[RMDB]
RNA sequence: GGGAACGACUCGAGUAGAGUCGAAAAGUCGCAAUACCCACGAGGGUUUGGCCGAGGUUCAUUCUGCGACAGUAUUCACGGCGCGCCGUGGAUUGAGCGGCAACGGUCCAAGCUGAUUUGGCGAUUCUCCCUGUUACGUGUUCGCACGUAACAGGGAAAAAGAAACAACAACAACAAC
Reactivity to DMS in 0.01 (KOAc 150mM, MgCl2 10mM, bicine 150mM(pH8.5), 24C), signal-to-noise 2, nucleotides 027 to 126: g000u000c000g000c000a150a090u000a070c000c000c010a300c240g020a190g010g000g030u000u010u010g000g000c000c000g000a080g020g030u000u020c150a050u000u030c050u000g010c000g000a150c170a230g010u010a030u000u010c070a040c100g000g000c010g000c260g000c000c000g000u000g000g000a020u000u000g010a120g010c010g000g020c030a090a160c010g000g000u020c010c000a020a030g000c040u000g000a170u000u010u000g020g010c030g000a030u000u000c160
Reactivity to 2A3 in 0.01 (KOAc 150mM, MgCl2 10mM, bicine 150mM(pH8.5), 24C), signal-to-noise 1, nucleotides 027 to 126: g000u020c000g000c040a020a100u080a230c000c000c000a040c050g060a130g000g120g000u000u040u030g000g000c010c000g030a020g040g000u070u250c030a040u240u040c020u040g010c020g040a030c010a020g090u070a020u000u060c010a000c000g000g000c040g010c110g000c060c000g000u000g000g000a020u020u030g030a010g000c000g000g020c020a020a030c010g000g030u050c000c010a020a000g020c000u090g010a230u060u070u140g080g010c020g030a010u070u040c020